Overview: An RNA of 170 nucleotides, treated with DMS and 2A3 and read out base by base. The RNA was probed in 150 mM KOAc, 10 mM MgCl2 and 150 mM bicine (pH 8.5) at 24 C. For 2A3, 7,624 sequencing reads were counted. The data come from the RNA Mapping Database (RMDB), library 15KLIB. DMS (dimethyl sulfate) methylates the pairing face of unpaired adenines and cytosines. DMS adducts were read by reverse transcription with MarathonRT. 2A3 is a SHAPE reagent: it acylates the 2'-hydroxyl of flexible nucleotides of all four kinds. Values cover nucleotides 27 to 129.
RNA sequence: GGGAACGACUCGAGUAGAGUCGAAAAAUGUAAUCAAUGGUUGCAAAGAUACGGCAUGCUUGCUCUGCUAUAAGAGGAACCGACUUACUAGAGUUGAAGCUUCUACCGUUGUCUGUGGUGGAAAACGUGGCGUGCUAGUUCGCUAGCACGAAAAGAAACAACAACAACAAC
Reactivity to DMS in 0.01 (KOAc 150mM, MgCl2 10mM, bicine 150mM(pH8.5), 24C), signal-to-noise 8, nucleotides 027 to 129: a070u030g030u050a060a070u060c090a120a180u050g010g010u000u050g000c000a030a040a040g020a100u000a070c050g020g030c070a040u000g030c060u010u010g060c040u020c000u000g010c130u030a060u080a060a040g010a030g010g010a070a100c130c020g010a070c030u030u000a000c080u000a020g030a040g010u030u080g020a060a070g020c080u010u010c070u040a110c030c070g040u000u000g010u030c100u000g000u030g020g020u040g030g000a050a020a050a050c130g020u050g000g000
Reactivity to 2A3 in 0.01 (KOAc 150mM, MgCl2 10mM, bicine 150mM(pH8.5), 24C), signal-to-noise 5, nucleotides 027 to 129: a030u160g010u090a030a030u090c140a040a070u180g080g000u030u030g050c040a130a080a010g060a070u100a120c020g030g020c040a010u060g050c020u030u050g020c000u010c010u060g000c040u080a020u050a290a040g020a010g060g010a030a020c050c020g020a030c010u040u050a000c010u030a020g000a050g020u000u040g080a000a000g050c000u030u020c000u060a040c010c030g040u030u020g000u040c060u020g020u000g000g030u020g010g000a030a020a010a030c060g040u040g090g010